The data come from the RNA Mapping Database (RMDB), library OK1LIB. Structure probing data (DMS and 2A3) for a 177-nucleotide construct. The RNA was probed in 150 mM KOAc, 10 mM MgCl2 and 150 mM bicine (pH 8.5) at 24 C. Reactivities are given for positions 27 through 126.
RNA sequence: GGGAACGACUCGAGUAGAGUCGAAAACGCAGCACCCUGGAGUACCACCUCGAUCGGCUCGUCGAACGCGAUAUCGUCGAGAAACGGUACGACCACCGGAGCCGAGUGUUGCUCUCGCUUGCCAACCAGCAUCGGCCUAGUUCGCUAGGCCGAUGCUAAAAGAAACAACAACAACAAC
Reactivity to DMS in 0.01 (KOAc 150mM, MgCl2 10mM, bicine 150mM(pH8.5), 24C), signal-to-noise 1, nucleotides 027 to 126: c160g000c140a160g000c020a030c040c000c150u150g010g000a300g000u000a000c060c020a180c170c000u000c080g000a070u030c100g000g000c020u040c000g000u040c070g050a080a030c220g000c000g000a020u130a070u020c070g000u000c000g000a020g030a070a000a290c050g000g050u000a060c060g030a170c120c000a000c250c100g000g000a080g000c020c000g000a070g000u020g000u000u000g000c020u010c000u000c060g000c040u000u000g000c050c000a130a010c000c100
Reactivity to 2A3 in 0.01 (KOAc 150mM, MgCl2 10mM, bicine 150mM(pH8.5), 24C), signal-to-noise 1, nucleotides 027 to 126: c040g000c000a010g000c010a030c020c000c000u080g000g010a050g020u070a100c030c010a010c010c000u000c010g070a120u150c000g000g010c060u020c000g020u020c030g140a140a070c120g040c020g040a000u030a070u180c000g000u030c010g020a000g000a060a110a020c020g000g000u070a000c000g010a090c010c010a040c040c010g130g000a000g000c000c040g010a020g030u040g000u050u050g020c000u000c000u000c070g010c020u060u060g040c010c030a060a050c030c010